[RMDB]
RNA sequence: GGGAACGACUCGAGUAGAGUCGAAAAAUCUUUAAGCAGAUGGCAGGUUCACCCCGUACGGUGCGGAAGUUCGCGCUUCCGUGAAACGCGAAAAUCGGACGGUGGCUGCAAGUCGCAUCGCAAAAGCUAUAGCUUGUUAGGUUCGCCUAACAAGCAACCCAUGUCAGAACUUCGGUUCUGACAUGGGAAAAGAAACAACAACAACAAC
Reactivity to 2A3 in 0.01 (KOAc 150mM, MgCl2 10mM, bicine 150mM(pH8.5), 24C), signal-to-noise 2, nucleotides 027 to 156: a000u030c040u020u050u030a220a010g040c060a080g000a040u020g080g000c030a020g010g010u250u200c020a050c010c000c000c000g020u020a020c050g020g010u030g000c000g010g000a000a000g000u150u230c050g060c050g000c120u010u000c010c000g000u010g030a100a090a010c140g010c020g120a030a020a000a150u080c020g000g010a000c070g010g080u100g040g000c030u010g050c040a080a040g100u130c030g010c060a010u000c000g030c030a000a040a110a000g000c050u130a060u160a160g000c000u010u000g000u000u000a010g000g010u020u010c200g090c010c000u020a010a000c000a000a000g000c000a000a010
Background:
Conditions: 150 mM KOAc, 10 mM MgCl2 and 150 mM bicine (pH 8.5), 24 C. Chemical mapping of a 207-nucleotide RNA with 2A3. 2A3 adducts were read by reverse transcription with SuperScript II with manganese. Reactivities are given for positions 27 through 156. The data come from the RNA Mapping Database (RMDB), library M2RFPK.